[RMDB]
RNA sequence: GGGAACGACUCGAGUAGAGUCGAAAAAGCCUGGUCGAUACGUCGACCAGGCAAUGCCGCCACAACGGCUUCCUGGCGUGGCGGAUCUCAUCCAAUGGAGCAACGCUCCGGAUACGUCCGGAGCGAAAUUAAUAGAAUUAUUCGUAAUUCUAUUAAUAAAAGAAACAACAACAACAAC
Reactivity to DMS in 0.01 (KOAc 150mM, MgCl2 10mM, bicine 150mM(pH8.5), 24C), signal-to-noise 3, nucleotides 027 to 126: a200g030c000c000u000g010g020u000c000g000a020u010a060c180g020u010c000g020a040c010c000a000g010g010c010a000a010u000g010c020c010g010c000c010a030c030a020a250c030g000g000c040u010u030c010c010u020g000g000c300g000u000g000g010c000g000g010a000u020c050u000c060a080u010c090c100a100a060u030g000g010a020g000c030a180a260c000g010c010u000c000c020g020g000a040u010a070c200g010u000c010c000g010g000a030g010c000g000a010a030
Reactivity to 2A3 in 0.01 (KOAc 150mM, MgCl2 10mM, bicine 150mM(pH8.5), 24C), signal-to-noise 3, nucleotides 027 to 126: a000g300c000c000u000g000g000u000c000g000a010u010a070c220g090u020c010g010a000c000c000a000g000g000c000a000a000u010g000c000c000g000c000c000a020c010a020a030c030g050g000c000u160u150c010c020u020g010g000c010g000u000g000g000c020g010g000a010u030c030u020c010a100u100c060c090a060a130u190g020g000a020g010c020a040a050c010g010c000u000c010c000g000g000a030u030a020c190g060u010c000c000g000g000a000g000c000g010a000a000